[RMDB]
Background:
This 177-nucleotide RNA was probed chemically with DMS and 2A3. Reactivities are given for positions 27 through 126. DMS adducts were read by reverse transcription with MarathonRT. It was measured as part of the RMDB library 15KREP. The RNA was probed in 150 mM KOAc, 10 mM MgCl2 and 150 mM bicine (pH 8.5) at 24 C. 2A3 adducts were read by reverse transcription with SuperScript II with manganese.

RNA sequence: GGGAACGACUCGAGUAGAGUCGAAAAUUGUUCUCGAGGGCCUUCCUUCUUCGGUGAUCCUUCCUCUCCCUGUCGGUGAAGUCUCCCGCACGAGUCCUCUUCCUAGGUCCGGAGUCGAUCUCCAUCUACUGUUUGAAUAGUUCGCUAUUCAAACAGUAAAAGAAACAACAACAACAAC
Reactivity to DMS in 0.01 (KOAc 150mM, MgCl2 10mM, bicine 150mM(pH8.5), 24C), signal-to-noise 2, nucleotides 027 to 126: u020u030g000u000u000c010u000c030g020a100g010g010g000c070c020u010u000c050c010u000u010c060u000u000c070g030g020u010g010a090u000c030c030u000u000c020c030u010c020u000c040c020c010u010g010u010c040g010g000u000g010a110a150g000u000c070u000c010c010c040g050c080a160c060g020a090g000u000c010c020u020c060u000u000c030c020u010a070g010g000u000c040c030g010g000a030g020u000c040g000a070u000c000u000c010c100a130u020c110u000
Reactivity to 2A3 in 0.01 (KOAc 150mM, MgCl2 10mM, bicine 150mM(pH8.5), 24C), signal-to-noise 1, nucleotides 027 to 126: u050u080g000u030u010c000u010c010g020a040g030g010g010c000c000u030u060c020c010u060u090c020u050u040c030g030g010u060g060a070u060c020c000u060u050c000c000u020c020u030c000c020c020u020g080u070c030g010g060u070g050a050a010g030u010c000u000c000c000c010g020c000a040c040g010a000g030u010c000c020u020c000u010u010c000c010u010a050g020g020u000c020c030g040g010a000g020u020c010g010a040u020c010u000c030c000a020u000c010u040